[RMDB]
RNA sequence: GGGAACGACUCGAGUAGAGUCGAAAAUAAGGUGGCUUUGUCUCAUAUGCACCCUUCUCUUCAGAGAGCACAACAUUAUAGGCAAUGGCCAACACACUAAUAAGGCUGUAUUUUUGGCCAUACUGUGCAAAUUUGUAUUUGCAUAUAAUAAAUAAUACCUAAUAGUACCCUUCGGGGUACUAUUAGGAAAAGAAACAACAACAACAAC
Reactivity to 2A3 in 0.01 (KOAc 150mM, MgCl2 10mM, bicine 150mM(pH8.5), 24C), signal-to-noise 2, nucleotides 027 to 156: u220a060a020g090g020u040g010g000c030u000u000u060g010u010c010u050c110a020u060a000u140g040c040a080c000c020c010u080u050c000u020c020u140u160c040a030g000a000g000a010g180c010a040c040a200a100c030a040u140u110a040u150a130g040g000c020a030a040u050g040g000c020c000a080a000c030a000c000a020c010u040a070a110u060a120a100g040g040c050u030g010u140a250u000u160u040u070u160g040g000c000c010a010u010a060c000u000g020u000g010c000a000a020a040u140u190u180g150u100a040u020u000u000g130c000a000u100a030u020a130a050u130a110a060a040u240a050a020u300a110